[RMDB]
RNA sequence: GGGAACGACUCGAGUAGAGUCGAAAAGAUAUGGACUUCUUGAAGCACACUACCCACCCUCAAAUGUAGCAUCGGAAACGAUGCUACAUUUGAGGAGGUGUGAACUACUUCGUGAAGUCCUAAGUCAUCAAAAACUCAUGUUCGCAUGAGUUUUUGAAAAAGAAACAACAACAACAAC
Reactivity to DMS in 0.01 (KOAc 150mM, MgCl2 10mM, bicine 150mM(pH8.5), 24C), signal-to-noise 1, nucleotides 027 to 126: g000a150u040a300u000g000g000a020c010u010u000c000u000u010g010a030a010g020c010a100c020a020c010u010a040c010c020c060a300c220c000c000u000c000a000a040a020u010g000u000a010g010c000a030u000c000g000g000a150a110a210c000g010a000u000g000c010u010a000c010a000u000u000u010g000a020g010g010a010g000g000u000g010u000g010a080a050c050u010a260c000u000u000c000g010u000g010a050a000g030u000c000c000u000a020a080g020u010c070a160